RNA sequence: GGGAACGACUCGAGUAGAGUCGAAAAUUGAAGUGACAGAACAAAGGAGUUUAAAUUAGAUUUGCAAACGGACGGAACUAAAUACUGUCACUUUUAUGUCUAACUUAUCGUUAACUCUGCAAAAAGACCACAAAUUAUACUUCGGUAUAAUUUGUGGAAAAGAAACAACAACAACAAC
Reactivity to 2A3 in 0.01 (KOAc 150mM, MgCl2 10mM, bicine 150mM(pH8.5), 24C), signal-to-noise 3, nucleotides 027 to 126: u070u080g010a000a000g010u000g010a000c000a020g020a170a030c040a140a110a070g090g010a050g040u090u090u150a070a080a060u120u110a090g070a190u090u090u140g030c050a100a060a030c050g040g020a000c020g030g070a020a010c050u090a060a040a100u130a070c010u000g000u000c000a000c000u000u000u000u010a020u020g030u000c000u010a030a040c010u040u130a040u070c000g010u010u000a040a020c030u030c020u080g010c020a060a050a040a050a040g060a050
Reactivity to DMS in 0.01 (KOAc 150mM, MgCl2 10mM, bicine 150mM(pH8.5), 24C), signal-to-noise 2, nucleotides 027 to 126: u000u010g000a050a000g010u000g000a000c010a020g030a200a160c160a060a090a100g010g010a130g000u000u000u000a020a040a130u020u000a070g010a140u000u000u010g010c130a040a060a130c210g000g020a050c090g010g000a070a080c030u000a040a030a090u000a110c000u000g000u000c000a000c010u000u000u010u000a030u000g000u000c040u000a050a100c050u010u000a040u000c090g010u000u000a090a050c070u000c070u000g000c120a010a030a070a120a060g000a110